Source: RMDB library OK3TST, as collected in RNAgym. This 207-nucleotide RNA was probed chemically with 2A3.

RNA sequence: GGGAACGACUCGAGUAGAGUCGAAAACCCGGUAUGGGUAUCAGUGCCAACAACCAGAUGCAUGGACAAGGGCCAAGCCAGCCAUGUGGUGCUGUGCCCCUGGGACGAAUGCCAUCAGCUGGGAUGCAGAACAGACCAUUUCCUGGAAAUAUGAGCAAGACGGACCUUGAUUCGUCAAGGUCCGUCUAAAAGAAACAACAACAACAAC
Reactivity to 2A3 in 0.01 (KOAc 150mM, MgCl2 10mM, bicine 150mM(pH8.5), 24C), signal-to-noise 1, nucleotides 027 to 156: c070c000c020g040g020u120a120u070g000g000g070u090a190u110c000a030g040u020g040c050c000a040a020c080a020a020c190c090a050g040a160u030g000c040a000u050g000g020a020c020a090a050g100g040g090c130c000a060a010g060c000c000a000g120c040c000a020u030g020u040g040g010u070g020c050u000g050u160g000c020c000c000c020u020g000g030g100a090c070g040a020a000u100g000c180c000a070u090c120a060g030c020u010g000g060g000a020u060g000c020a010g080a130a050c000a000g020a030c000c020a070u130u040u080c000c010u000g060g060a030a180a030u140a030u190g070a070g080c030a020
Source information
The RNA was probed in 150 mM KOAc, 10 mM MgCl2 and 150 mM bicine (pH 8.5) at 24 C. 2A3 adducts were read by reverse transcription with SuperScript II with manganese.